[RMDB]
RNA sequence: GGGAACGACUCGAGUAGAGUCGAAAAGAUAUGGACCAUAGGGAGACCGCCCACUACCCACCGAUUAUAUGGUCGGAAACGACCAUAUAAUCGAGGUGGGUGGGUCGACGAUCUAUGGUCCUAAGUCGUAUCCAUAAAACUUCGGUUUUAUGGAUACAAAAGAAACAACAACAACAAC
Reactivity to 2A3 in 0.01 (KOAc 150mM, MgCl2 10mM, bicine 150mM(pH8.5), 24C), signal-to-noise 2, nucleotides 027 to 126: g110a110u300a230u300g000g000a000c000c000a010u010a020g020g010g000a020g000a000c010c020g020c030c010c000a020c000u190a290c010c020c000a010c000c020g000a010u020u000a010u000a000u010g000g010u000c050g030g060a150a120a020c010g000a000c010c000a000u000a000u000a000a000u000c000g000a010g000g010u000g000g000g010u040g110g000g010u010c000g030a300c010g000a010u000c010u000a000u000g000g000u000c000c000u000a020a010g070u040c080
Reactivity to DMS in 0.01 (KOAc 150mM, MgCl2 10mM, bicine 150mM(pH8.5), 24C), signal-to-noise 4, nucleotides 027 to 126: g000a140u010a220u010g000g010a000c000c000a000u000a000g000g000g000a060g020a020c020c010g010c010c000c000a010c000u000a150c020c000c020a300c240c010g010a000u000u000a000u000a000u000g010g000u000c000g010g000a090a090a300c010g000a000c000c000a000u010a000u000a000a010u000c000g000a040g000g010u000g000g010g020u000g000g040g020u000c020g020a070c220g000a070u000c010u000a010u000g000g000u000c000c000u000a010a060g030u010c200
This 177-nucleotide RNA was probed chemically with 2A3 and DMS. High DMS reactivity at an A or C suggests that its Watson-Crick edge is free. For DMS the reverse transcriptase was MarathonRT.